[RMDB]
RNA sequence: GGGAACGACUCGAGUAGAGUCGAAAAGCAAAGGACAUGAAGCACAUGAAGCACAUGAAGCACAUGAAGCACAUGAAGCACAUGAAGCACAUGAAGCACAUGAAGCACAUGAAGCACAUGAAAAAAACUUAUCUGCUAGGUUCGCCUAGCAGAUAAGAAAAGAAACAACAACAACAAC
Reactivity to 2A3 in 0.01 (KOAc 150mM, MgCl2 10mM, bicine 150mM(pH8.5), 24C), signal-to-noise 2, nucleotides 027 to 126: g050c070a060a000a030g060g010a030c010a010u020g040a110a000g080c010a020c000a040u030g030a180a020g000c020a000c000a060u020g050a100a020g000c000a010c000a040u020g060a110a010g000c000a010c000a060u050g020a070a010g050c010a020c000a070u010g060a140a010g020c010a030c000a040u030g100a100a020g010c000a020c000a050u030g040a080a020g010c000a000c000a010u010g030a100a000g020c020a010c010a060u000g020a150a000a010a000a010a020a000
Reactivity to DMS in 0.01 (KOAc 150mM, MgCl2 10mM, bicine 150mM(pH8.5), 24C), signal-to-noise 1, nucleotides 027 to 126: g000c040a060a110a110g000g030a100c050a080u010g030a100a030g050c010a210c030a000u000g000a050a070g000c050a150c040a010u030g000a170a070g000c080a260c070a060u000g000a030a080g000c010a300c080a000u000g000a130a190g020c120a140c030a010u010g050a110a180g050c000a160c000a010u000g000a100a260g030c000a230c010a010u010g000a010a120g010c030a120c010a010u000g000a070a000g020c050a190c040a000u010g000a000a000a020a080a120a030a130

Description
An RNA of 177 nucleotides, treated with 2A3 and DMS and read out base by base. 2A3 adducts were read by reverse transcription with SuperScript II with manganese. It was measured as part of the RMDB library M2PK90. Conditions: 150 mM KOAc, 10 mM MgCl2 and 150 mM bicine (pH 8.5), 24 C.